An RNA of 177 nucleotides, treated with DMS and 2A3 and read out base by base. The DMS profile rests on 9,730 reads. The 2A3 profile rests on 13,059 reads. The RNA was probed in 150 mM KOAc, 10 mM MgCl2 and 150 mM bicine (pH 8.5) at 24 C. Source: RMDB library RFMREP, as collected in RNAgym.
[RMDB]
RNA sequence: GGGAACGACUCGAGUAGAGUCGAAAAAUCCAGUACAUUUCACCACAUUGUCUGCAGCUCACCUCGCAGGAAUCACUUCGGUGAGCGAGGGCUGUUCGACUCCACGCGGAAAUGUCGAAGGAUGAUGCUAUAUUAAAUCGUUCGCGAUUUAAUAUAGAAAAGAAACAACAACAACAAC
Reactivity to DMS in 0.01 (KOAc 150mM, MgCl2 10mM, bicine 150mM(pH8.5), 24C), signal-to-noise 9, nucleotides 027 to 126: a040u000c000c010a110g020u010a030c010a010u010u000u000c030a150c060c070a110c170a100u010u000g000u000c010u000g000c000a020g010c040u010c130a300c050c010u000c010g020c000a160g010g010a100a230u000c080a060c060u000u010c120g010g010u000g000a020g020c040g020a020g010g000g000c010u000g010u010u000c300g010a010c000u000c190c070a090c170g010c170g000g000a010a020a010u000g000u000c050g000a140a130g010g000a030u000g000a120u010g010
Reactivity to 2A3 in 0.01 (KOAc 150mM, MgCl2 10mM, bicine 150mM(pH8.5), 24C), signal-to-noise 7, nucleotides 027 to 126: a000u010c000c000a010g050u120a010c010a020u010u000u050c120a130c120c000a060c040a140u070u120g010u000c000u020g000c000a000g000c020u050c070a130c010c000u000c000g020c010a040g130g240a050a090u060c010a010c030u060u060c140g100g000u010g000a010g000c010g000a020g000g020g000c000u010g010u030u040c040g010a000c010u010c030c030a090c110g100c100g030g000a010a000a010u010g010u010c020g030a140a090g030g010a010u060g010a020u190g020